Source: RMDB library OK2TRN, as collected in RNAgym. The record gives the reactivity of an RNA of 177 nucleotides to 2A3 and DMS.
[RMDB]
RNA sequence: GGGAACGACUCGAGUAGAGUCGAAAAGUUUUCGGUGAUGUUAGUAAAUGGUAUUUGAACAGUUCUUUUUCUAUUCAUGUCAGCAUUGCGUAUAGAGGUUAUUAUGUCAGCGAUGGUGUCCUUACCCACCGGGAGGAUAGUUCGCUAUCCUCCCGGUAAAAGAAACAACAACAACAAC
Reactivity to 2A3 in 0.01 (KOAc 150mM, MgCl2 10mM, bicine 150mM(pH8.5), 24C), signal-to-noise 1, nucleotides 027 to 126: g050u060u040u040u040c060g050g010u050g030a030u070g010u200u100a160g050u180a110a070a040u040g020g160u110a120u030u050u070g010a020a000c010a100g070u120u050c040u120u080u000u040u070c020u020a090u010u100c080a070u070g100u060c000a010g050c040a100u030u110g060c000g020u080a040u040a150g130a030g060g060u000u000a060u220u010a040u180g120u040c020a010g070c030g070a040u100g010g020u040g020u120c030c000u020u070a140c000c000c040
Reactivity to DMS in 0.01 (KOAc 150mM, MgCl2 10mM, bicine 150mM(pH8.5), 24C), signal-to-noise 2, nucleotides 027 to 126: g010u000u010u010u000c040g040g010u010g010a080u000g010u000u000a090g020u000a050a070a070u000g000g020u040a100u020u010u010g020a060a050c100a070g030u000u000c080u000u000u020u000u000c010u010a090u010u010c050a060u000g000u010c070a060g040c050a050u000u010g020c050g000u000a070u000a050g010a090g000g010u000u000a020u000u000a090u000g010u000c060a030g040c040g010a070u000g010g020u000g010u000c030c070u000u010a100c050c030c070

Reactivities are given for positions 27 through 126. For DMS, 2,349 sequencing reads were counted.